[RMDB]
This 207-nucleotide RNA was probed chemically with 2A3 and DMS.
As a SHAPE reagent, 2A3 marks flexible, mostly unpaired nucleotides at the ribose 2'-OH.
2A3 adducts were read by reverse transcription with SuperScript II with manganese.
Reactivities are given for positions 27 through 156.
The data come from the RNA Mapping Database (RMDB), library M2RFPK.
The RNA was probed in 150 mM KOAc, 10 mM MgCl2 and 150 mM bicine (pH 8.5) at 24 C.

RNA sequence: GGGAACGACUCGAGUAGAGUCGAAAACUUAUCCGGUUUUAACGCUGUUUUAUUGGCGCAAAGGUUUACGGAUAAACAACUAAUAAUAAAACCUUUUGUGUGCGAAACGUGGUUGUUUAACGUACUCACUGCCCCCAGGGAUUCGUCCCUGGGGGAAUGUUAAAUCGAUAUUCGUAUCGAUUUAACAAAAAGAAACAACAACAACAAC
Reactivity to 2A3 in 0.01 (KOAc 150mM, MgCl2 10mM, bicine 150mM(pH8.5), 24C), signal-to-noise 4, nucleotides 027 to 156: c030u020u010a000u000c000c000g000g010u000u000u010u020a070a020c020g020c030u030g140u170u200u140u180a120u210u260g030g000c000g010c040a040a010a000g000g000u000u000u010a000c000g010g010a010u040a050a090a010c030a020a020c060u180a050a110u160a300a030u090a040a070a000a010c000c000u000u020u150u130g080u010g000u010g020c090g050a100a070a020c020g020u050g040g010u080u010g010u000u050u060a040a010c010g000u010a030c000u010c050a060c040u080g000c010c000c010c000c000a000g000g010g010a010u040u030c030g030u020c040c000c010u000g000g000g000g010g000a000a000
Reactivity to DMS in 0.01 (KOAc 150mM, MgCl2 10mM, bicine 150mM(pH8.5), 24C), signal-to-noise 1, nucleotides 027 to 156: c060u010u000a020u010c000c000g030g000u000u000u010u000a220a060c050g000c010u010g000u000u000u000u000a170u010u000g000g000c000g030c010a030a050a040g070g000u000u010u000a130c020g010g000a040u000a010a060a130c030a050a130c080u000a090a120u000a070a180u000a070a020a050a030c010c010u000u000u000u000g040u000g010u000g000c010g000a040a040a020c050g010u010g000g040u000u000g000u010u010u010a020a020c030g030u000a040c000u000c010a060c030u000g000c000c000c000c000c000a040g000g000g000a080u000u000c270g020u000c000c010c000u010g000g010g010g010g010a000a010